[RMDB]
The data come from the RNA Mapping Database (RMDB), library OK2TRN.
Structure probing data (DMS and 2A3) for a 177-nucleotide construct.
High DMS reactivity at an A or C suggests that its Watson-Crick edge is free.
2A3 adducts were read by reverse transcription with SuperScript II with manganese.
Values cover nucleotides 27 to 126.
For DMS the reverse transcriptase was MarathonRT.
The reactions ran in a buffer of 150 mM KOAc, 10 mM MgCl2 and 150 mM bicine (pH 8.5), at 24 C.
RNA sequence: GGGAACGACUCGAGUAGAGUCGAAAACAUAUUAGUAUAUCUACCAGUACAUGGUACAAGCACGCCAGGGGAAAGAAUGAGAAUAUACAUUUCCAAGCAUGCAUCAUCCAGACAAUGUAUCAGAUAACGCAUUGGAAGGAUUCGUCCUUCCAAUGCGAAAAGAAACAACAACAACAAC
Reactivity to DMS in 0.01 (KOAc 150mM, MgCl2 10mM, bicine 150mM(pH8.5), 24C), signal-to-noise 2, nucleotides 027 to 126: c050a070u030a100u010u010a100g020u010a110u030a060u010c030u000a010c030c050a060g000u010a060c110a080u010g010g030u000a030c100a060a070g020c100a030c100g030c030c030a080g000g000g000g000a100a080a060g010a070a030u010g000a060g030a120a020u000a060u010a040c100a120u010u000u000c000c010a100a030g010c040a010u000g040c030a060u000c100a090u010c050c020a080g010a080c100a090a040u010g000u010a030u000c120a090g020a070u010a090a230
Reactivity to 2A3 in 0.01 (KOAc 150mM, MgCl2 10mM, bicine 150mM(pH8.5), 24C), signal-to-noise 2, nucleotides 027 to 126: c030a040u160a110u170u230a120g120u100a110u020a090u140c010u020a040c000c000a010g060u080a050c080a140u030g000g000u040a050c030a060a020g050c000a000c030g050c000c010a020g120g090g000g070a020a040a100g050a000a050u170g020a080g100a180a010u190a020u020a090c090a070u000u020u080c000c000a000a000g040c040a010u050g000c000a030u040c010a000u000c010c020a020g020a110c080a030a080u090g030u060a050u160c020a000g010a170u070a180a060